[RMDB]
RNA sequence: GGGAACGACUCGAGUAGAGUCGAAAAAUUUACGACUCUCAAGCGAAGCGAGUGCUAGCAUGCUCGAUAGCACUAAACAAAACAGGAAACUGAAAAUCGAGCAAACGCUAGAGUCGUUCCCAUACAAUUCAUUAUGAGAUUUCGAUCUCAUAAUGAAAAAAGAAACAACAACAACAAC
Reactivity to 2A3 in 0.01 (KOAc 150mM, MgCl2 10mM, bicine 150mM(pH8.5), 24C), signal-to-noise 2, nucleotides 027 to 126: a000u120u140u120a040c000g010a000c000u020c000u010c030a040a010g020c010g150a090a000g050c040g090a070g120u150g050c000u010a000g010c030a050u050g000c000u000c010g010a010u030a030g020c050a020c130u120a020a080a020c070a020a090a020a000c010a010g000g060a070a080a010c010u020g050a040a070a100a020u020c000g010a000g000c000a010a030a080c040g000c020u010a010g000a000g000u000c000g000u010u000c000c000c000a010u000a000c000a000a020
Reactivity to DMS in 0.01 (KOAc 150mM, MgCl2 10mM, bicine 150mM(pH8.5), 24C), signal-to-noise 2, nucleotides 027 to 126: a080u000u000u020a120c000g020a020c010u000c000u000c060a120a140g000c040g000a150a220g000c130g010a100g010u000g010c020u000a040g000c050a140u010g010c020u000c000g060a030u000a040g000c070a050c060u010a060a030a090c120a160a050a120a140c030a030g000g000a090a110a140c040u000g000a050a030a130a030u000c030g000a050g030c010a010a050a110c100g010c020u010a040g010a000g000u000c000g010u000u000c000c000c000a020u000a040c250a120a080
Source: RMDB library M2PK90, as collected in RNAgym.
Structure probing data (2A3 and DMS) for a 177-nucleotide construct.
The RNA was probed in 150 mM KOAc, 10 mM MgCl2 and 150 mM bicine (pH 8.5) at 24 C.
For DMS the reverse transcriptase was MarathonRT.